[RMDB]
RNA sequence: GGGAACGACUCGAGUAGAGUCGAAAAGCCCCCGUCUUCGGACGGGGGCAAUUAACGGUCGGCGCAUGCAGCUAGUCGAAAAUGCUGCUCGACGUUUUGCUAAAAUACGACCCUUCGGGGUCGUAAACUUUGAGUUAUCUUUCGAGAUAACUCAAAGAAAAGAAACAACAACAACAAC
Reactivity to 2A3 in 0.01 (KOAc 150mM, MgCl2 10mM, bicine 150mM(pH8.5), 24C), signal-to-noise 2, nucleotides 027 to 126: g010c000c030c050c020c010g000u030c050u040u080c230g130g010a000c000g000g050g040g000g000c010a000a000u000u010a010a000c000g130g030u020c030g030g000c070g000c100a010u170g000c000a010g010c030u080a050g240u250c070g060a040a000a050a110u070g000c010u030g010c030u020c010g050a020c010g010u000u020u010u060g050c020u060a060a090a060a020u080a010c010g000a000c010c010c000u020u020c240g040g010g000g000u000c000g000u000a000a000a000
Reactivity to DMS in 0.01 (KOAc 150mM, MgCl2 10mM, bicine 150mM(pH8.5), 24C), signal-to-noise 3, nucleotides 027 to 126: g020c010c000c000c010c000g030u000c000u000u010c210g030g010a010c020g020g010g010g010g000c000a000a010u000u000a010a020c010g030g020u000c010g020g000c110g000c070a030u010g010c130a150g010c050u010a120g010u020c090g000a080a110a100a050u000g000c000u000g010c010u010c010g010a010c010g000u000u000u000u000g000c030u010a040a090a060a180u000a010c000g010a000c000c000c000u000u020c150g020g020g000g010u000c000g010u000a010a030a090
Record summary
An RNA of 177 nucleotides, treated with 2A3 and DMS and read out base by base. It was measured as part of the RMDB library M2PK50. The DMS profile rests on 2,863 reads. Conditions: 150 mM KOAc, 10 mM MgCl2 and 150 mM bicine (pH 8.5), 24 C. DMS adducts were read by reverse transcription with MarathonRT.